[RMDB]
An RNA of 177 nucleotides, treated with 2A3 and DMS and read out base by base.
For 2A3 the reverse transcriptase was SuperScript II with manganese.
RNA sequence: GGGAACGACUCGAGUAGAGUCGAAAAGAUAUGGACCACUAGGCUAGCUGGUGGUCGGAAACGACCAUCCAGCUUGGACCCUAUGUGGUCCUAAGUCAGCCAGCCUGAGACUUCGGUCUCAGGCUGAGCAAGCUGAUGAGUUCGCUCAUCAGCUUGCAAAAGAAACAACAACAACAAC
Reactivity to 2A3 in 0.01 (KOAc 150mM, MgCl2 10mM, bicine 150mM(pH8.5), 24C), signal-to-noise 1, nucleotides 027 to 126: g020a000u020a010u090g020g010a000c000c010a000c000u010a000g030g020c050u030a050g000c000u040g010g060u000g000g000u030c000g040g020a070a080a000c000g010a000c000c000a030u140c060c020a000g000c020u000u010g010g040a020c000c020c000u030a090u300g020u000g010g040u010c000c000u000a000a000g010u000c000a030g110c040c000a000g000c030c000u030g020a020g000a010c000u210u300c300g110g000u020c000u020c000a020g000g000c010u010g000a000
Reactivity to DMS in 0.01 (KOAc 150mM, MgCl2 10mM, bicine 150mM(pH8.5), 24C), signal-to-noise 2, nucleotides 027 to 126: g000a030u010a300u010g000g010a040c010c000a010c000u000a010g000g020c080u000a020g030c000u010g010g040u000g000g020u010c000g000g010a050a100a180c000g010a010c000c000a000u000c000c000a000g020c000u020u010g020g000a110c300c010c000u000a020u010g030u010g010g000u010c000c000u010a000a040g010u010c010a300g000c120c010a010g000c000c000u000g010a010g000a000c000u010u020c290g020g010u000c010u000c000a000g010g010c000u000g000a040

The reactions ran in a buffer of 150 mM KOAc, 10 mM MgCl2 and 150 mM bicine (pH 8.5), at 24 C. The 2A3 profile rests on 2,345 reads. For DMS, 2,040 sequencing reads were counted. Reactivities are given for positions 27 through 126. DMS adducts were read by reverse transcription with MarathonRT.